[RMDB]
RNA sequence: GGGAACGACUCGAGUAGAGUCGAAAAUAGCGUUAAUUAUUUCGUUUGCUAGGUGAUAUGUGACAUCUGCUUCAGAGGAACAGAAAAUGGUAUUUGCAAUUUCUUAUUACCUUUGUAGAUUCGUUAAGCCCUUUUAAUAGUUCGCUAUUAAAAGGGCAAAAGAAACAACAACAACAAC
Reactivity to 2A3 in 0.01 (KOAc 150mM, MgCl2 10mM, bicine 150mM(pH8.5), 24C), signal-to-noise 2, nucleotides 027 to 126: u020a000g010c010g030u000u090a090a060u120u060a170u070u150u080c060g010u050u080u100g010c030u030a020g000g030u020g040a060u060a040u180g070u060g040a050c020a090u000c000u020g000c020u030u000c020a030g040a040g110g020a020a020c010a010g030a010a070a010a000u070g020g070u080a170u080u170u140g040c020a030a050u020u010u020c010u020u110a090u050u090a130c000c020u060u040u040g030u010a040g020a120u050u050c020g000u000u010a070a080
Reactivity to DMS in 0.01 (KOAc 150mM, MgCl2 10mM, bicine 150mM(pH8.5), 24C), signal-to-noise 4, nucleotides 027 to 126: u000a040g010c060g020u010u010a080a090u000u010a090u000u000u000c080g020u000u000u010g000c040u010a040g030g020u000g000a090u000a060u010g010u000g010a070c080a090u010c050u000g000c070u000u010c040a070g010a070g000g000a050a100c220a040g000a020a020a040a060u000g010g010u000a090u000u000u010g020c070a070a080u000u000u000c040u010u000a060u000u010a110c030c020u000u000u000g010u000a040g000a140u000u000c070g010u000u000a060a170